RNA sequence: GGGAACGACUCGAGUAGAGUCGAAAAUGGAGGGGAGUUCUGCCUACCCUUAGGGAGAAAACAGCAUUGAAACAAUAUUUCUCAUUCUUCCCACCUCUUCCUCCCACUUCCUCAACACGAGUGGGACGAUUUAUCUUGCUGAUGAGAUCAGGGCAAGGUAAGAGAACGCUUUCGAGCGUUCUCUUACAAAAGAAACAACAACAACAAC
Reactivity to 2A3 in 0.01 (KOAc 150mM, MgCl2 10mM, bicine 150mM(pH8.5), 24C), signal-to-noise 2, nucleotides 027 to 156: u210g040g010a060g030g070g000g000a050g010u130u020c020u190g130c000c020u130a170c020c000c050u050u010a130g030g010g000a000g050a000a010a000a110c110a000g080c050a130u070u180g040a080a040a020c040a270a180u060a150u170u080u060c110u010c060a170u100u000c010u060u020c050c000c000a090c030c020u100c030u150u050c020c030u050c000c020c000a010c000u130u050c030c100u140c040a050a170c100a080c120g010a010g000u000g000g000g050a000c060g000a010u050u080u130a110u090c080u050u010g000c000u000g000a120u110g020a070g100a180u120c020a060g010g020g010c050a060a000g060